[RMDB]
RNA sequence: GGGAACGACUCGAGUAGAGUCGAAAAUUCGGAUUUUCUAGAUUGGAAAGAACGUCAUACAUGGGGAUUUACAUUAGGUGAGCAUUUACUGCGUUUCAAAAGGUUAAGACAUUUAACUGAAAGUCGUAAAUCGGAAUUAGGUUUAGGUGAGAUUGAAACAAACACUUUGGUUCGCCAAAGUGUUUGUAAAAGAAACAACAACAACAAC
Reactivity to DMS in 0.01 (KOAc 150mM, MgCl2 10mM, bicine 150mM(pH8.5), 24C), signal-to-noise 1, nucleotides 027 to 156: u000u010c040g020g000a240u000u000u000u000c030u000a100g020a130u010u010g000g020a040a130a160g020a060a090c040g020u000c080a090u000a070c010a140u000g010g060g030g000a190u000u000u000a110c040a110u000u000a090g020g020u010g010a100g040c020a090u000u000u000a040c070u010g010c060g030u000u010u010c030a060a070a070a230g020g000u000u000a050a070g020a070c030a120u000u010u010a040a050c020u010g000a050a060a150g010u010c080g020u010a020a090a050u000c040g010g020a060a080u000u000a050g030g000u000u000u000a040g010g040u010g010a040g000a150u000u000g020a110a120
Reactivity to 2A3 in 0.01 (KOAc 150mM, MgCl2 10mM, bicine 150mM(pH8.5), 24C), signal-to-noise 2, nucleotides 027 to 156: u020u010c010g020g000a000u060u010u030u040c030u140a090g040a200u080u150g040g010a060a020a000g030a060a060c000g030u000c060a020u040a280c040a040u070g010g010g000g040a010u030u130u170a060c020a020u090u000a050g070g000u020g030a000g050c000a000u000u040u080a050c030u020g030c030g100u060u010u020c050a110a120a000a010g030g010u060u060a000a000g080a010c020a210u060u040u050a020a040c000u010g050a060a000a020g000u040c000g030u040a000a000a100u090c020g000g050a060a070u130u080a060g000g090u030u060u060a030g020g000u020g030a020g000a040u040u200g030a060a090